Conditions: 150 mM KOAc, 10 mM MgCl2 and 150 mM bicine (pH 8.5), 24 C. Structure probing data (DMS and 2A3) for a 177-nucleotide construct. For DMS, 6,723 sequencing reads were counted. 2A3 adducts were read by reverse transcription with SuperScript II with manganese. For DMS the reverse transcriptase was MarathonRT.
[RMDB]
RNA sequence: GGGAACGACUCGAGUAGAGUCGAAAAAACAAGGGCAAAUGCUAUGACGCCAGAUGCUCAAUCCAAGCACCACAGUUAGGAUUGUGCUUUUCCUCAUCAAGUCGUGAAAUGAGGUCACGAAGCUCUCCAUAGAGCCUUGAUUCGUCAAGGCUCUAUGAAAAGAAACAACAACAACAAC
Reactivity to DMS in 0.01 (KOAc 150mM, MgCl2 10mM, bicine 150mM(pH8.5), 24C), signal-to-noise 7, nucleotides 027 to 126: a060a070c140a080a100g000g000g010c030a080a090a080u010g010c090u000a100u000g010a120c150g000c060c060a090g010a120u000g000c010u000c020a030a040u000c020c010a070a100g020c030a080c120c180a090c240a070g010u010u000a200g000g000a030u000u010g010u000g000c010u000u000u000u000c020c000u000c070a040u010c110a080a090g020u010c060g000u010g010a040a070a060u010g000a070g010g000u000c040a030c050g000a070a120g010c050u000c040u010c060
Reactivity to 2A3 in 0.01 (KOAc 150mM, MgCl2 10mM, bicine 150mM(pH8.5), 24C), signal-to-noise 3, nucleotides 027 to 126: a010a000c140a070a030g050g010g000c040a130a080a050u150g010c040u120a050u300g080a050c080g030c040c020a000g020a050u080g000c000u020c040a010a000u000c000c010a040a010g030c020a060c150c020a040c080a080g020u050u080a010g020g020a050u020u050g010u000g030c000u010u010u040u010c000c020u010c010a060u060c030a040a080g140u060c040g060u050g110a010a060a100u160g020a030g040g080u040c010a010c110g020a010a010g030c010u020c000u030c050